[RMDB]
RNA sequence: GGGAACGACUCGAGUAGAGUCGAAAACUACACAACGUAGCAUUGUGACAUGACACUGAUCAUGCAAAUGAAUGCCAGUACCAGUACCAGUACCAGUGUCAGAAAGUAAAGCUUUGAAUGAAAGCUCAUUCCCCACGCUGUUCGCAGCGUGGGGAAUAAAAGAAACAACAACAACAAC
Reactivity to DMS in 0.01 (KOAc 150mM, MgCl2 10mM, bicine 150mM(pH8.5), 24C), signal-to-noise 1, nucleotides 027 to 126: c030u000a080c030a040c050a010a060c210g040u030a030g000c130a140u000u000g020u010g000a120c130a090u000g030a000c000a070c050u000g040a160u000c030a050u000g000c040a060a120a020u000g040a020a090u000g010c180c200a110g030u000a020c080c010a170g020u000a120c090c010a040g000u010a080c060c010a010g000u000g000u010c030a020g010a050a060a070g000u010a100a020a040g000c000u030u000u000g000a110a130u000g000a010a010a010g000c020u010c190